[RMDB]
RNA sequence: GGGAACGACUCGAGUAGAGUCGAAAACGUAGAGACGGUCAACCAUUCUACGAGCGGUUUCCCCUCUGCGCUUUUACAAAUCUAGAUAAGUUGAAGUUCAAAGAGGUCUGUAAAACUACUACUGGUACACUAUAUGAUGGUUCGCCAUCAUAUAGUGAAAAGAAACAACAACAACAAC
Reactivity to DMS in 0.01 (KOAc 150mM, MgCl2 10mM, bicine 150mM(pH8.5), 24C), signal-to-noise 5, nucleotides 027 to 126: c020g000u000a030g010a040g010a080c170g020g000u000c190a050a060c010c020a100u010u000c020u010a100c140g010a070g020c090g000g010u000u010u010c030c010c020c030u000c010u000g000c070g020c080u000u000u000u000a040c070a040a100a070u010c060u010a090g010a100u010a080a150g020u000u000g010a060a110g000u000u000c070a050a090a100g010a080g000g010u000c050u000g000u000a030a040a040a060c100u000a050c080u000a060c090u000g000g010u010a170
Reactivity to 2A3 in 0.01 (KOAc 150mM, MgCl2 10mM, bicine 150mM(pH8.5), 24C), signal-to-noise 3, nucleotides 027 to 126: c010g010u000a010g000a010g040a070c080g060g000u090c030a060a050c060c000a040u060u030c020u100a050c110g030a010g060c050g020g030u000u020u000c010c000c010c000u000c000u020g000c010g000c020u000u030u010u030a020c020a040a150a040u060c040u100a070g080a210u110a200a030g030u050u070g070a050a010g020u030u110c040a060a060a030g040a030g020g020u020c030u050g110u080a040a040a080a030c040u130a030c010u060a070c050u060g050g000u030a020

An RNA of 177 nucleotides, treated with DMS and 2A3 and read out base by base. 2A3 adducts were read by reverse transcription with SuperScript II with manganese. Conditions: 150 mM KOAc, 10 mM MgCl2 and 150 mM bicine (pH 8.5), 24 C. The DMS profile rests on 5,887 reads.